About this RNA: This 207-nucleotide RNA was probed chemically with 2A3. The reactions ran in a buffer of 150 mM KOAc, 10 mM MgCl2 and 150 mM bicine (pH 8.5), at 24 C. For 2A3, 2,065 sequencing reads were counted. Source: RMDB library VIROID, as collected in RNAgym. 2A3 adducts were read by reverse transcription with SuperScript II with manganese.
[RMDB]
RNA sequence: GGGAACGACUCGAGUAGAGUCGAAAAUCCACGCAGGUCGCGAACAAGAUGAAGGCGUAGCAAGUUCAGGUCGCCGCGCACGAACUGGCGCUCGAUCUCCGCCUCGCUCGAGUAGGUUUCCCCGGGGAUCCCUGUUCGAGCCCUUGCCACCUUACAGGGUGCUAUAUUGGUUCGCCAAUAUAGCACCAAAAGAAACAACAACAACAAC
Reactivity to 2A3 in 0.01 (KOAc 150mM, MgCl2 10mM, bicine 150mM(pH8.5), 24C), signal-to-noise 3, nucleotides 027 to 156: u000c000c000a020c040g090c090a030g000g050u100c070g040c030g090a110a020c130a100a030g070a090u270g090a160a010g010g000c020g020u060a050g070c110a160a080g060u200u180c080a010g050g000u020c000g030c110c020g000c030g020c000a180c090g110a270a070c100u200g070g000c000g000c020u030c010g020a020u000c010u050c040c010g020c010c000u000c020g000c000u000c000g000a010g000u030a030g000g060u010u020u030c000c000c010c020g120g070g000g010a030u030c020c000c000u040g010u010u030c020g010a020g020c020c010c000u000u020g020c000c030a010c010c000u040u140a070c030a100g030